[RMDB]
RNA sequence: GGGAACGACUCGAGUAGAGUCGAAAAGAAAACGUGGCUCUGACCGGUGCUAAAGGGUCUCUGCCCCAACAACACCUGUCAGUAGCCGUGGGGCAGGAUCCUUUAGCACCGGUUCGUGUUACGAAAAUGGCCCUUUUAGUUUCGACUAAAAGGGCCAAAAAGAAACAACAACAACAAC
Reactivity to DMS in 0.01 (KOAc 150mM, MgCl2 10mM, bicine 150mM(pH8.5), 24C), signal-to-noise 1, nucleotides 027 to 126: g010a220a060a070a250c000g000u020g010g000c010u000c000u010g050a010c030c010g000g030u070g000c000u000a010a000a040g030g000g000u030c000u070c000u050g040c000c130c000c000a000a080c070a060a180c210a150c020c070u080g030u020c150a240g040u010a040g080c070c170g010u000g000g000g030g000c000a000g000g000a040u000c010c000u000u000u000a000g000c010a020c000c010g010g000u000u000c040g000u000g000u020u010a000c000g000a040a070a040a070